The record gives the reactivity of an RNA of 177 nucleotides to 2A3 and DMS. As a SHAPE reagent, 2A3 marks flexible, mostly unpaired nucleotides at the ribose 2'-OH. Values cover nucleotides 27 to 126. The RNA was probed in 150 mM KOAc, 10 mM MgCl2 and 150 mM bicine (pH 8.5) at 24 C. DMS adducts were read by reverse transcription with MarathonRT. The DMS profile rests on 9,557 reads. For 2A3 the reverse transcriptase was SuperScript II with manganese.

[RMDB]
RNA sequence: GGGAACGACUCGAGUAGAGUCGAAAACAUUGCCGCGCUGGUGCUGGACCAUCUGGCGGCGCGCGACCUGGUAUCGGAUGCCGUGGUGAUCGAGGACAUCACCGUGGGGGGCGACCAGGACGGCGGCGAAGAUACGGAAGUUCGCUUCCGUAUCUUCAAAAGAAACAACAACAACAAC
Reactivity to 2A3 in 0.01 (KOAc 150mM, MgCl2 10mM, bicine 150mM(pH8.5), 24C), signal-to-noise 4, nucleotides 027 to 126: c030a100u060u260g010c000c000g000c020g030c080u070g030g050u060g030c060u160g090g180a150c030c010a040u070c050u080g070g000c000g010g000c010g000c020g010c000g010a030c000c030u020g010g020u070a100u080c020g020g120a130u100g110c000c010g020u010g010g000u000g000a010u020c090g090a130g100g190a050c010a040u010c010a000c000c000g000u020g010g020g000g010g020g000c020g020a020c000c010a000g020g030a000c030g170g110c010g020g010c050
Reactivity to DMS in 0.01 (KOAc 150mM, MgCl2 10mM, bicine 150mM(pH8.5), 24C), signal-to-noise 5, nucleotides 027 to 126: c090a130u000u000g010c010c000g000c020g030c080u000g000g010u000g020c080u010g010g000a200c110c030a040u010c060u000g020g030c010g000g010c020g020c050g020c020g000a110c020c020u000g000g010u000a050u000c010g010g000a300u010g010c000c000g020u000g010g030u000g000a010u000c060g000a180g010g010a170c300a050u000c000a010c000c010g030u000g000g010g010g000g000g000c030g000a040c010c000a020g000g010a070c030g010g010c010g020g010c120